[RMDB]
RNA sequence: GGGAACGACUCGAGUAGAGUCGAAAAGCUCGUAGGUUCAGAUGAUGGGCCCGCAUCUGUACGAAAGUCAGACGAAAGUCCAGCCUACGUGCAUGAGCACGCGGGCCCCGUGCUCUACAGCAAAAGAACGAUUAAUGGCAUUCGUGCCAUUAAUCGUAAAAGAAACAACAACAACAAC
Reactivity to 2A3 in 0.01 (KOAc 150mM, MgCl2 10mM, bicine 150mM(pH8.5), 24C), signal-to-noise 4, nucleotides 027 to 126: g010c020u040c030g000u010a000g000g010u070u130c120a060g020a120u100g010a010u050g030g010g010c000c000c010g020c000a010u010c010u020g070u130a020c040g080a120a060a020g070u040c020a020g000a020c000g090a130a020a000g000u000c000c010a000g000c000c000u010a000c000g000u010g000c000a040u120g010a000g000c040a020c040g010c020g000g000g000c000c000c000c000g000u020g000c000u000c000u020a060c030a090g060c040a040a080a060a010g100a100
Reactivity to DMS in 0.01 (KOAc 150mM, MgCl2 10mM, bicine 150mM(pH8.5), 24C), signal-to-noise 1, nucleotides 027 to 126: g050c000u000c080g020u000a000g040g000u000u000c150a060g000a100u010g000a050u070g000g000g040c000c020c000g030c000a020u000c010u060g000u010a030c010g000a100a080a190g020u000c110a100g020a000c000g000a150a040a200g000u000c010c210a040g000c010c010u000a020c000g020u000g000c030a060u020g010a140g000c000a010c090g000c050g020g010g030c000c000c000c000g010u000g000c070u010c000u000a020c110a110g030c060a080a070a140a060g010a130